[RMDB]
An RNA of 177 nucleotides, treated with 2A3 and read out base by base. The reactions ran in a buffer of 150 mM KOAc, 10 mM MgCl2 and 150 mM bicine (pH 8.5), at 24 C. For 2A3 the reverse transcriptase was SuperScript II with manganese.
RNA sequence: GGGAACGACUCGAGUAGAGUCGAAAAUAAACAAAUCACGCACUUUUCCGGUGGUCCGGACCCAGACCACCGUCACUCCAUUCAGCUUCUUCGGAACCUGUUCGGAGGAAUUAAAUGGGCACCCAAAGCCAGUGUAGCAGUUCGCUGCUACACUGGCAAAAGAAACAACAACAACAAC
Reactivity to 2A3 in 0.01 (KOAc 150mM, MgCl2 10mM, bicine 150mM(pH8.5), 24C), signal-to-noise 1, nucleotides 027 to 126: u190a060a090a010c040a000a030a110u300c240a210c080g040c040a060c070u200u060u240u120c030c000g000g000u000g000g000u000c000c000g080g100a300c010c000c000a000g000a000c000c000a000c020c000g000u000c110a000c000u000c000c000a000u000u050c010a000g000c000u000u000c000u000u050c040g090g000a000a000c000c000u010g050u170u050c010g000g020a000g000g000a000a010u010u000a020a000a050u070g000g020g000c000a160c000c000c000a000a000a030